Chemical mapping of a 177-nucleotide RNA with 2A3 and DMS.
The reactions ran in a buffer of 150 mM KOAc, 10 mM MgCl2 and 150 mM bicine (pH 8.5), at 24 C.
Source: RMDB libraries RFM100 and RFMREP, as collected in RNAgym.

RNA sequence: GGGAACGACUCGAGUAGAGUCGAAAAGACCAUGCUAAUGCCAGAGCAUUUUCGCAUCUGGCCAGUAAACUAAUCGAGCUGGAGGUUCCUACCACAGCGACGAUUUUGGACAUAGGCAGCGCACCGGAGGAAUAGCACCAUUCGUGGUGCUAUUCCUAAAAGAAACAACAACAACAAC
Reactivity to 2A3 in 0.01 (KOAc 150mM, MgCl2 10mM, bicine 150mM(pH8.5), 24C), signal-to-noise 3, nucleotides 027 to 126: g060a000c000c030a020u090g000c010u080a070a010u120g000c010c010a000g000a000g000c030a090u150u030u080u180c180g000c020a300u060c010u000g000g070c000c000a000g010u030a020a120a080c050u070a000a030u010c010g020a010g010c000u030g000g040a150g260g000u160u170c010c000u020a030c000c000a040c000a020g000c000g160a140c050g040a120u010u000u050u130g010g000a000c010a040u050a040g020g020c010a020g000c010g000c020a030c010c010g010g050
Reactivity to DMS in 0.01 (KOAc 150mM, MgCl2 10mM, bicine 150mM(pH8.5), 24C), signal-to-noise 2, nucleotides 027 to 126: g010a280c070c090a090u000g000c000u010a050a090u010g060c000c000a000g000a080g050c010a160u040u000u050u020c210g010c000a160u040c000u000g000g000c060c080a010g000u020a030a090a090c090u000a020a030u010c000g020a300g000c020u000g010g010a120g010g000u000u030c080c140u000a120c000c000a050c010a010g020c000g020a030c060g020a030u000u000u000u000g010g000a090c150a120u020a070g000g000c030a010g000c100g000c000a120c040c050g010g040